Source: RMDB library OK3TST, as collected in RNAgym. Chemical mapping of a 207-nucleotide RNA with 2A3.
[RMDB]
RNA sequence: GGGAACGACUCGAGUAGAGUCGAAAACUGGGAUUAUGUUAAAUGACCAAACCUAAGAAUAAUCAGUGUUCCUGAGGAAGAAGAGAAAUCUAAAAGUUUGGAAAACAUAUCUGGGGGAAUAAUCGAGGAAAACUUCCCCAGCCUUGCUAGAGACCUAAUGAUCCCACUGAUUCGUCAGUGGGAUCAUAAAAGAAACAACAACAACAAC
Reactivity to 2A3 in 0.01 (KOAc 150mM, MgCl2 10mM, bicine 150mM(pH8.5), 24C), signal-to-noise 1, nucleotides 027 to 156: c030u040g030g000g000a090u110u030a030u060g010u030u250a210a290a280u140g060a080c000c000a080a000a000c000c000u050a110a000g000a130a050u080a080a000u060c000a060g010u030g100u230u000c010c010u030g000a050g000g060a040a050g050a290a000g000a050g000a130a130a110u060c030u040a160a090a000a060g000u000u030u000g040g000a000a000a130a000c000a000u030a000u060c030u000g020g020g000g050g020a000a040u040a030a090u080c100g000a110g010g040a040a160a050a000c060u050u040c000c000c040c000a000g000c000c010u010u050g000c010u030a030g000a040g010a090c000c000u010a060
Annotation:
2A3 adducts were read by reverse transcription with SuperScript II with manganese. The reactions ran in a buffer of 150 mM KOAc, 10 mM MgCl2 and 150 mM bicine (pH 8.5), at 24 C.